[RMDB]
RNA sequence: GGGAACGACUCGAGUAGAGUCGAAAAAGGUGAUUUCUCCUGCACCUUUAUCAAUGGAGGAACUCGACUUUGCUGUGGGUCCCAAAGGGACCGUAGGUGCAGACAGUUACCGGCGGUGAAGUGUGAGCAUAGGUUCGUGUCUUCGGACACGAACCAAGCUCAUUUAGAUGUUCGCAUCUAAAUGAGCAAAAGAAACAACAACAACAAC
Reactivity to 2A3 in 0.01 (KOAc 150mM, MgCl2 10mM, bicine 150mM(pH8.5), 24C), signal-to-noise 6, nucleotides 027 to 156: a000g010g010u010g000a020u020u050u000c000u010c010c010u120g060c030a010c000c010u110u260u110a060u040c050a020a040u300g020g000a010g000g010a040a040c020u010c010g010a010c010u010u010u020g000c000u020g010u080g040g000g000u020c010c000c030a160a130a120g010g000g000a010c000c030g020u080a020g000g000u010g000c000a040g090a300c030a020g010u060u110a020c000c000g020g000c000g000g000u020g010a020a010g030u080g070u100g100a010g030c070a100u110a160g000g010u010u000c000g000u010g000u000c000u010u040c160g070g000a000c000a000c000g000a000a000c000c000a000a000
Reactivity to DMS in 0.01 (KOAc 150mM, MgCl2 10mM, bicine 150mM(pH8.5), 24C), signal-to-noise 2, nucleotides 027 to 156: a040g020g010u000g000a300u000u010u000c020u010c030c010u020g030c070a060c040c020u000u000u020a070u000c140a080a140u000g020g020a090g010g010a040a080c050u000c030g020a020c010u000u000u000g020c010u000g040u000g000g000g000u000c000c000c010a110a090a120g020g010g020a030c010c050g000u000a020g020g000u000g020c010a150g000a090c160a100g020u010u000a040c000c000g030g040c080g000g000u010g020a080a030g030u010g010u020g000a060g060c030a090u000a100g020g020u000u000c010g020u000g030u000c010u000u000c300g010g000a030c000a000c000g000a000a000c010c000a010a110
This 207-nucleotide RNA was probed chemically with 2A3 and DMS. DMS adducts were read by reverse transcription with MarathonRT. It was measured as part of the RMDB library M2RFPK. For 2A3 the reverse transcriptase was SuperScript II with manganese. The DMS profile rests on 4,701 reads.